[RMDB]
RNA sequence: GGGAACGACUCGAGUAGAGUCGAAAAGACAGCAGUGAUGACCCAGGUCCUGGUCAGCGGGCACAGAUCCCAGCAGCUGGGGCAGCCGGGGACCACCUGUCCCUCAAGGACCUCCCCACCUGUCCUGUACUUAUACUUCUUUCGAGAAGUAUAAGUAAAAAGAAACAACAACAACAAC
Reactivity to DMS in 0.01 (KOAc 150mM, MgCl2 10mM, bicine 150mM(pH8.5), 24C), signal-to-noise 9, nucleotides 027 to 126: g010a080c050a060g010c070a070g010u000g000a110u010g010a130c040c020c060a090g010g010u000c020c010u000g010g010u010c040a100g020c080g010g010g010c050a110c160a120g000a120u010c010c000c000a130g010c060a170g010c070u000g000g010g010g010c060a080g010c070c060g000g000g010g000a050c070c110a070c140c070u000g000u000c010c020c010u010c110a110a080g000g000a060c050c090u000c020c010c010c040a080c140c050u000g000u000c040c040u000g010
Reactivity to 2A3 in 0.01 (KOAc 150mM, MgCl2 10mM, bicine 150mM(pH8.5), 24C), signal-to-noise 8, nucleotides 027 to 126: g040a010c020a010g050c040a040g030u030g080a130u090g090a090c000c000c020a010g020g030u140c000c010u030g010g020u090c020a040g020c050g020g020g000c070a070c040a220g070a140u100c000c000c010a010g010c010a000g010c020u050g000g000g060g000c010a010g040c010c040g000g000g000g030a020c010c010a040c010c020u030g020u010c020c010c000u050c040a050a050g020g010a050c000c020u040c010c000c000c000a040c000c020u030g040u040c000c020u080g020

About this RNA: The record gives the reactivity of an RNA of 177 nucleotides to DMS and 2A3. Conditions: 150 mM KOAc, 10 mM MgCl2 and 150 mM bicine (pH 8.5), 24 C. Values cover nucleotides 27 to 126.